[RMDB]
RNA sequence: GGGAACGACUCGAGUAGAGUCGAAAACUUUAUAUCUUUCGACGUCCGGGAUUUGGGUUUCAUACCCUGUGAGGGCCGCACCAUAUUACGGGUCGGGAACUGAGUAGGGAGGGUCCAUUUUUGCUGGAUACAGACUUGGAUUCGUCCAAGUCUGUAUAAAAGAAACAACAACAACAAC
Reactivity to 2A3 in 0.01 (KOAc 150mM, MgCl2 10mM, bicine 150mM(pH8.5), 24C), signal-to-noise 1, nucleotides 027 to 126: c030u000u300u100a120u030a040u160c000u050u130u050c010g030a030c030g070u020c010c070g130g030g060a040u170u050u090g110g020g020u030u120u070c140a090u170a120c000c000c010u020g070u090g070a190g000g030g050c020c020g030c000a030c000c070a050u050a070u150u090a040c040g040g040g060u110c060g060g070g020a020a130c050u100g040a020g070u130a060g030g050g090a200g070g050g010u000c050c000a110u190u110u060u040u130g000c040u050g040g010
Reactivity to DMS in 0.01 (KOAc 150mM, MgCl2 10mM, bicine 150mM(pH8.5), 24C), signal-to-noise 2, nucleotides 027 to 126: c040u000u010u010a120u010a080u040c020u000u000u000c000g000a100c130g000u000c020c070g020g000g010a120u000u000u000g030g000g010u000u000u000c060a180u010a090c020c010c010u010g000u010g010a220g010g020g030c020c060g000c100a090c020c030a020u010a050u020u000a080c090g020g010g000u010c100g030g000g020a060a060c180u010g000a080g000u010a080g000g010g020a130g000g020g000u020c110c030a030u000u010u000u000u000g040c100u000g000g010

Conditions: 150 mM KOAc, 10 mM MgCl2 and 150 mM bicine (pH 8.5), 24 C. An RNA of 177 nucleotides, treated with 2A3 and DMS and read out base by base. The 2A3 profile rests on 668 reads. For 2A3 the reverse transcriptase was SuperScript II with manganese.